RNA sequence: GGGAACGACUCGAGUAGAGUCGAAAAUUUAAGCCUGGGGAGAGGUGUAAUAGCGAGAACCAGGUGUAGGCAUUAUGAGCUGGUCGUUUUUGUACUGGUUUAACUGAUUCAUGGAGUCCUUGAAAAGAGCGAUAUGUACUUUCGAGUACAUAUCGCUAAAAGAAACAACAACAACAAC
Reactivity to DMS in 0.01 (KOAc 150mM, MgCl2 10mM, bicine 150mM(pH8.5), 24C), signal-to-noise 1, nucleotides 027 to 126: u000u000u050a170a150g010c000c030u030g000g000g000g000a210g030a050g000g030u010g000u130a140a120u010a190g010c000g010a110g000a300a170c000c040a020g000g010u010g020u010a060g020g060c090a120u010u010a110u030g000a010g040c030u000g020g010u000c080g000u010u000u010u080u080g000u080a030c050u000g000g010u000u020u010a020a130c070u000g000a140u020u000c110a010u010g000g000a040g000u000c000c030u000u000g020a000a050a040a060g020
Reactivity to 2A3 in 0.01 (KOAc 150mM, MgCl2 10mM, bicine 150mM(pH8.5), 24C), signal-to-noise 2, nucleotides 027 to 126: u090u000u050a050a000g000c000c000u000g010g000g000g000a160g070a110g170g000u000g080u080a180a300u120a050g080c140g010a140g000a090a000c000c020a000g000g000u040g000u000a050g000g090c000a000u000u190a050u180g140a000g020c180u010g050g000u000c040g000u000u000u000u070u300g050u000a050c010u000g030g020u000u000u000a090a050c020u000g010a090u000u190c050a050u060g020g030a050g020u000c000c000u060u010g070a090a070a000a000g070